RNA sequence: GGGAACGACUCGAGUAGAGUCGAAAAGAAAAGAGCGUAAUCGCGUCUUGACGUGAGUGAGGCUAGACUGUAGACUAUCCCAAGUGGGAUAGCAUACCUCACAAUACGCUGAUCUACAGUCAAAAGAACGUGGUGAGGUAUUCGUACCUCACCACGUAAAAGAAACAACAACAACAAC
Reactivity to DMS in 0.01 (KOAc 150mM, MgCl2 10mM, bicine 150mM(pH8.5), 24C), signal-to-noise 2, nucleotides 027 to 126: g000a060a020a030a030g000a090g020c000g010u020a030a300u010c000g050c060g030u010c020u020u040g010a070c000g000u000g000a040g030u010g000a030g010g000c120u050a060g000a010c030u000g000u000a000g000a080c020u000a000u000c000c000c000a300a190g040u140g000g010g000a000u020a010g010c210a040u000a120c000c000u040c010a000c000a050a060u000a020c000g030c020u000g020a040u000c000u000a020c000a000g050u020c040a150a170a000a060g000a000
Reactivity to 2A3 in 0.01 (KOAc 150mM, MgCl2 10mM, bicine 150mM(pH8.5), 24C), signal-to-noise 3, nucleotides 027 to 126: g160a010a040a020a000g000a000g010c010g000u010a050a010u060c000g000c010g010u040c180u110u170g090a040c000g000u010g010a030g000u010g000a000g000g000c000u070a040g020a000c000u000g000u000a000g000a030c000u000a000u040c000c010c020a100a220g260u300g000g000g000a000u010a000g000c010a030u050a030c010c000u000c000a000c000a000a010u030a000c000g000c000u010g020a010u000c000u000a000c000a000g000u000c000a030a030a020a020g100a030